[RMDB]
The record gives the reactivity of an RNA of 177 nucleotides to 2A3 and DMS. The reactions ran in a buffer of 150 mM KOAc, 10 mM MgCl2 and 150 mM bicine (pH 8.5), at 24 C.
RNA sequence: GGGAACGACUCGAGUAGAGUCGAAAAGAUAUGGAGACCCAUCCAGCGAUGAGCUAAGUCGGAAACGACUUAGCGAGCUGGUGGUGUCUCCUAAGUCAAAACUCUAGUUGGUUCGCCAACUAGAGAACACCUAGUUUCUCUUCGGAGAAACUAGGUGAAAAGAAACAACAACAACAAC
Reactivity to 2A3 in 0.01 (KOAc 150mM, MgCl2 10mM, bicine 150mM(pH8.5), 24C), signal-to-noise 2, nucleotides 027 to 126: g010a040u080a020u270g000g000a000g010a000c040c010c000a030u280c060c000a000g000c010g300a300u300g100a020g050c000u010a020a000g010u000c000g030g030a050a150a120c030g020a000c000u000u010a010g000c000g030a010g030c020u000g000g000u000g000g040u130g000u060c000u010c000c010u000a000a000g030u000c020a050a060a080a150c020u040c000u010a000g020u030u000g050g080u020u090c230g070c070c010a000a000c010u000a000g000a000g020a000a000
Reactivity to DMS in 0.01 (KOAc 150mM, MgCl2 10mM, bicine 150mM(pH8.5), 24C), signal-to-noise 2, nucleotides 027 to 126: g000a050u020a300u000g000g000a000g010a000c020c020c000a000u010c010c030a010g000c000g000a170u000g010a220g050c000u000a000a000g040u010c010g000g000a150a100a230c000g000a020c000u000u000a000g000c000g000a100g000c000u010g000g010u000g000g000u000g000u000c000u000c000c030u000a020a090g010u010c000a080a060a130a150c000u000c000u000a010g000u000u000g010g000u000u000c270g030c000c000a000a000c000u000a000g000a020g010a080a200